[RMDB]
RNA sequence: GGGAACGACUCGAGUAGAGUCGAAAAGUGACCUGGAGGUGAACCCCUAUGAUGGGCUGCCCUUCUCCUCCCGCUACUAUGAGCUUCUGCGGCAGCGCCGGGAGCUGCCCGUCUGGACCACCAAGUACUAGACAGAGCUAUUCGUAGCUCUGUCUAGAAAAGAAACAACAACAACAAC
Reactivity to 2A3 in 0.01 (KOAc 150mM, MgCl2 10mM, bicine 150mM(pH8.5), 24C), signal-to-noise 1, nucleotides 027 to 126: g060u000g050a110c010c050u030g000g060a060g010g010u070g060a110a090c040c000c000c040u080a160u280g170a080u080g020g000g000c020u040g030c030c000c000u030u020c020u030c000c020u010c000c010c020g050c010u090a050c020u060a120u270g090a060g050c010u060u020c060u140g030c010g030g000c000a010g000c030g030c040c050g070g010g000a100g000c030u020g000c020c010c000g000u000c030u030g030g030a030c010c010a030c030c010a060a040g030u000a080
Reactivity to DMS in 0.01 (KOAc 150mM, MgCl2 10mM, bicine 150mM(pH8.5), 24C), signal-to-noise 2, nucleotides 027 to 126: g000u010g010a070c060c030u000g010g030a050g030g040u000g010a100a160c130c030c010c050u000a090u010g010a080u010g000g020g030c040u000g000c070c040c040u000u010c040u010c020c020u000c040c020c110g010c080u010a040c090u010a120u000g000a090g010c090u000u010c070u000g010c020g010g030c050a060g000c060g030c100c150g020g010g010a070g020c040u000g010c030c010c040g010u000c040u000g010g000a100c060c020a070c040c070a050a100g000u000a120
An RNA of 177 nucleotides, treated with 2A3 and DMS and read out base by base. Source: RMDB library OK2TRN, as collected in RNAgym. For DMS the reverse transcriptase was MarathonRT. The DMS profile rests on 2,153 reads. 2A3 adducts were read by reverse transcription with SuperScript II with manganese.